[RMDB]
RNA sequence: GGGAACGACUCGAGUAGAGUCGAAAAGAUAUGGAUGUUACAUCGCGAUAAGCUCGUAUCGGAAACGAUACAGAGCUUUUGACGCGGGUAACAUCCUAAGUCAAAGAGUAAGCUUCGGCUUACUCAACUCAUCAGAAUACUUCGGUAUUCUGAUGAGAAAAGAAACAACAACAACAAC
Reactivity to DMS in 0.01 (KOAc 150mM, MgCl2 10mM, bicine 150mM(pH8.5), 24C), signal-to-noise 4, nucleotides 027 to 126: g010a000u000a030u010g000g000a010u000g010u010u000a000c000a070u010c010g030c000g010a090u020a020a010g000c000u000c000g000u000a000u000c000g020g000a010a010a020c000g020a010u000a000c000a110g010a000g010c000u000u000u000u010g020a180c120g020c000g000g000g000u000a000a000c000a000u000c000c000u000a000a050g000u000c000a150a140a170g010a000g000u000a010a000g010c000u000u020c290g030g010c000u000u000a000c000u000c000a070a110
Reactivity to 2A3 in 0.01 (KOAc 150mM, MgCl2 10mM, bicine 150mM(pH8.5), 24C), signal-to-noise 7, nucleotides 027 to 126: g010a000u010a010u040g000g000a000u000g000u000u010a050c080a300u290c090g000c020g120a230u130a300a010g000c000u010c000g010u000a000u000c010g000g000a020a010a000c010g010a000u030a010c100a100g010a000g000c000u010u010u020u080g240a100c050g000c000g000g000g020u000a000a000c000a000u000c000c000u000a010a000g010u000c020a100a110a150g010a000g010u010a000a000g000c020u060u190c300g080g010c000u020u020a000c000u000c000a000a030